Structure probing data (DMS and 2A3) for a 177-nucleotide construct. The DMS profile rests on 928 reads. DMS adducts were read by reverse transcription with MarathonRT. Reactivities are given for positions 27 through 126. The RNA was probed in 150 mM KOAc, 10 mM MgCl2 and 150 mM bicine (pH 8.5) at 24 C. The 2A3 profile rests on 1,053 reads. High 2A3 reactivity points to a flexible backbone, as in loops and unpaired stretches.
[RMDB]
RNA sequence: GGGAACGACUCGAGUAGAGUCGAAAAAGUAUCAGGAAGACUUGUCGCUGGGCGUUCAGUCUGCCCUGCUUCAGGACGACCCGACCAUUGGUCUGGCCCAAAUCCAGAAACUCAAGGCUCAAAACAAGAGGACGAUCUAUUUCGAUAGAUCGUCCUCAAAAGAAACAACAACAACAAC
Reactivity to DMS in 0.01 (KOAc 150mM, MgCl2 10mM, bicine 150mM(pH8.5), 24C), signal-to-noise 1, nucleotides 027 to 126: a000g000u020a010u030c000a010g000g030a090a220g000a080c000u000u000g000u000c070g070c060u040g020g000g000c000g000u010u060c300a150g040u000c080u060g010c020c010c000u000g000c000u000u000c000a050g000g000a180c050g000a150c010c000c050g000a090c050c170a030u000u010g000g000u000c000u000g000g100c060c050c090a130a200a060u000c010c000a010g040a020a080a140c020u050c030a070a030g050g000c020u000c140a110a090a120a160c300a170a020
Reactivity to 2A3 in 0.01 (KOAc 150mM, MgCl2 10mM, bicine 150mM(pH8.5), 24C), signal-to-noise 2, nucleotides 027 to 126: a020g230u200a160u140c070a010g030g060a000a060g110a110c000u000u000g010u010c000g000c010u090g000g030g000c060g070u080u090c070a170g300u020c110u060g020c000c000c000u000g040c000u000u000c000a000g020g050a000c030g060a050c000c050c030g000a000c020c020a140u030u040g030g080u030c000u010g040g000c020c030c060a100a020a060u020c010c010a010g110a050a050a030c020u010c060a040a020g070g030c060u080c020a100a190a050a180c050a080a090